Structure probing data (2A3 and DMS) for a 177-nucleotide construct.
RNA sequence: GGGAACGACUCGAGUAGAGUCGAAAAGAAGAAAGGACGAAGGGAGGGACCGACCGAAGAAAUAAGUCCGAAAGAAGCACGAAAAUAAAUAAAAUGCGAGCGAGCGAGCGAAAAUAAGUGCGAAAGAGGGUAACUAUAUCUUCGGAUAUAGUUACCCAAAAGAAACAACAACAACAAC
Reactivity to 2A3 in 0.01 (KOAc 150mM, MgCl2 10mM, bicine 150mM(pH8.5), 24C), signal-to-noise 2, nucleotides 027 to 126: g130a030a070g020a010a090a070g090g010a000c030g140a080a040g010g010g020a110g080g000g000a000c010c020g140a060c000c050g010a070a040g060a100a150a040u220a030a020g030u000c000c000g000a000a050a000g050a050a000g000c040a000c030g110a100a030a030a050u150a000a080a000u170a040a110a040a030u130g040c000g060a100g030c000g040a020g030c010g010a030g020c010g130a000a190a010a000u110a070a050g000u020g010c020g000a000a000a140g100a030
Reactivity to DMS in 0.01 (KOAc 150mM, MgCl2 10mM, bicine 150mM(pH8.5), 24C), signal-to-noise 3, nucleotides 027 to 126: g000a170a070g000a080a090a040g000g000a010c070g040a110a100g000g010g010a130g000g000g000a050c100c030g000a120c080c020g010a140a030g000a080a090a050u020a090a140g000u030c010c010g000a050a130a070g000a100a130g000c010a020c030g000a040a080a070a090u030a060a100a040u030a060a040a030a060u010g000c030g030a150g020c140g000a100g010c090g000a110g010c020g000a040a080a030a040u020a070a090g020u020g010c010g010a040a030a010g000a150